[RMDB]
This 207-nucleotide RNA was probed chemically with 2A3 and DMS.
Source: RMDB library M2RFPK, as collected in RNAgym.
For 2A3, 2,966 sequencing reads were counted.
Conditions: 150 mM KOAc, 10 mM MgCl2 and 150 mM bicine (pH 8.5), 24 C.
RNA sequence: GGGAACGACUCGAGUAGAGUCGAAAAAACUCAGCUAGGGAGAGUAUAACAUUCAUGUUGACGAGACCUAGACGAAACACAGAGGACAAUUAUUAAUCACUGGAUAGUAUUAGUAAUGACUCUGUGUAAAACUCUUCUACGUUCGCGUAGAAGAGAACGUGCAUAUUACGUUCGCGUAAUAUGCACGAAAAGAAACAACAACAACAAC
Reactivity to 2A3 in 0.01 (KOAc 150mM, MgCl2 10mM, bicine 150mM(pH8.5), 24C), signal-to-noise 5, nucleotides 027 to 156: a000a000c010u010c010a010g010c010u000a000g010g020g000a040g010a050g070u100a160u060a300a010c030a040u130u240c070a080u250g010u010u030g040a040c060g040a010g050a070c010c000u000a010g030a030c010g000a000a040a000c010a000c010a000g020a020g030g090a070c070a140a040u000u000a010u010u000a000a010u020c090a010c040u050g130g050a100u290a300g010u030a020u000u000a000g000u000a000a000u000g010a000c000u000c000u000g000u000g000u010a000a000a000a000c010u000c000u000u010c000u000a000c000g010u010u040c230g000c000g090u000a000g000a010a000g000a000g000a010a020
Reactivity to DMS in 0.01 (KOAc 150mM, MgCl2 10mM, bicine 150mM(pH8.5), 24C), signal-to-noise 2, nucleotides 027 to 156: a050a040c020u000c010a080g120c020u000a020g000g000g030a190g000a160g010u000a050u000a050a060c040a100u000u000c130a070u000g000u000u000g010a090c010g000a300g020a110c010c000u010a020g020a290c080g020a100a100a030c010a020c020a070g000a040g030g000a200c030a040a030u000u020a010u010u000a000a000u000c070a060c020u000g030g040a140u010a070g030u000a040u000u010a000g000u000a010a000u000g020a100c000u000c000u070g020u010g000u000a010a020a040a110c000u000c020u000u000c010u010a010c000g010u000u010c270g020c050g000u000a000g010a000a010g000a000g020a010a010